This 177-nucleotide RNA was probed chemically with DMS and 2A3.
[RMDB]
RNA sequence: GGGAACGACUCGAGUAGAGUCGAAAAUUGACCUGUGGUCACGUGCCGUUAUUGGCUGGUCAAUGUCGCCACGCAUGACGGCGCAACUGGCCUGCGAUGCCCUGCAGAUGGCGCUGUGGCGGCGUAACCUCAUUCUCCAAUUCGUUGGAGAAUGAGGAAAAGAAACAACAACAACAAC
Reactivity to DMS in 0.01 (KOAc 150mM, MgCl2 10mM, bicine 150mM(pH8.5), 24C), signal-to-noise 5, nucleotides 027 to 126: u010u010g010a120c030c020u010g020u010g010g010u000c020a050c160g000u000g010c000c010g010u000u010a050u010u010g020g020c010u010g010g000u000c100a090a090u000g010u000c110g000c000c000a040c100g020c120a060u000g000a040c060g000g010c000g020c040a060a050c130u000g010g000c020c010u000g010c070g000a080u000g010c020c020c030u010g000c050a070g010a150u010g010g010c090g000c030u000g030u000g000g010c060g030g010c030g010u010a070a140
Reactivity to 2A3 in 0.01 (KOAc 150mM, MgCl2 10mM, bicine 150mM(pH8.5), 24C), signal-to-noise 6, nucleotides 027 to 126: u060u060g080a060c010c010u110g040u100g160g000u010c020a010c090g030u050g010c000c000g010u000u040a100u150u130g160g000c030u010g000g000u050c060a090a180u210g090u160c040g000c000c010a020c060g050c030a070u110g040a040c010g000g000c000g000c020a050a050c080u050g020g010c000c000u010g020c020g050a050u110g040c000c020c030u020g000c000a030g040a230u180g130g020c080g000c100u060g020u030g050g000c050g010g010c010g020u040a050a060
The 2A3 profile rests on 9,774 reads.